[RMDB]
RNA sequence: GGGAACGACUCGAGUAGAGUCGAAAAGGAAUGGCUUUUCACAUUUUUAAAGGGUUAUAAGAAUGAGAAGAAUAAAGAAUAUGUGAUGGAGGCCACGCAUGACCCUUUACAGAACAAGCUUGUGGGCCUACAUGGCGUGAUUCGUCACGCCAUGUAGAAAAGAAACAACAACAACAAC
Reactivity to DMS in 0.01 (KOAc 150mM, MgCl2 10mM, bicine 150mM(pH8.5), 24C), signal-to-noise 2, nucleotides 027 to 126: g000g000a080a090u000g010g010c010u000u000u000u010c020a070c020a020u000u000u000u000u000a000a090a100g000g010g030u010u010a090u000a070a090g010a070a030u030g000a090g030a100a050g010a120a110u010a050a040a150g010a090a060u010a020u000g000u020g010a080u020g010g000a090g030g000c000c000a050c050g030c130a070u000g000a060c040c000c000u000u000u000a070c180a060g000a040a060c190a030a060g000c040u000u000g000u020g000g000g000c080
Reactivity to 2A3 in 0.01 (KOAc 150mM, MgCl2 10mM, bicine 150mM(pH8.5), 24C), signal-to-noise 1, nucleotides 027 to 126: g150g030a080a050u110g000g000c030u080u020u070u060c000a000c030a090u000u010u040u090u220a030a180a000g050g000g000u110u060a100u030a100a090g060a120a120u170g040a040g080a150a010g010a130a020u200a240a060a000g030a040a090u100a050u090g030u010g000a020u070g000g080a000g040g000c000c000a020c020g020c010a060u050g000a020c020c020c000u030u060u010a010c030a010g080a030a020c020a040a050g040c020u060u120g030u100g060g050g000c000
Conditions: 150 mM KOAc, 10 mM MgCl2 and 150 mM bicine (pH 8.5), 24 C. Structure probing data (DMS and 2A3) for a 177-nucleotide construct. 2A3 adducts were read by reverse transcription with SuperScript II with manganese. It was measured as part of the RMDB library OK2TST. DMS adducts were read by reverse transcription with MarathonRT.